[RMDB]
RNA sequence: GGGAACGACUCGAGUAGAGUCGAAAAUCCUAAGUCAGACUUGAUGACCGAUUGGGUUUGGUAUGAGGGAGAAACUCGGAAACGAGUUUCGAAGAACUCAUACUGAUCCAAUCGCAAGAGUCUGAUAUGGAAAAACCGGAGGAUUCGUCCUCCGGAAGUUCAAUGAUGUCUUCGGACAUCAUUGAACAAAAGAAACAACAACAACAAC
Reactivity to 2A3 in 0.01 (KOAc 150mM, MgCl2 10mM, bicine 150mM(pH8.5), 24C), signal-to-noise 1, nucleotides 027 to 156: u040c000c000u010a040a030g020u000c000a000g000a030c000u050u040g050a070u150g060a300c070c050g000a020u000u020g020g030g050u050u200u300g060g000u000a000u000g010a000g030g010g010a050g000a010a010a010c000u020c010g010g050a040a120a030c020g010a000g000u000u000u020c000g000a040a060g000a000a000c000u000c000a000u010a000c000u000g000a000u010c000c010a000a000u000c000g000c000a120a180g000a000g000u000c000u000g010a000u010a090u060g000g000a090a110a000a030a030c000c000g010g010a000g000g000a000u070u080c180g050u030c060c010u000c040c020g000g000a020a000
Conditions: 150 mM KOAc, 10 mM MgCl2 and 150 mM bicine (pH 8.5), 24 C. The record gives the reactivity of an RNA of 207 nucleotides to 2A3. It was measured as part of the RMDB library RNAMAK.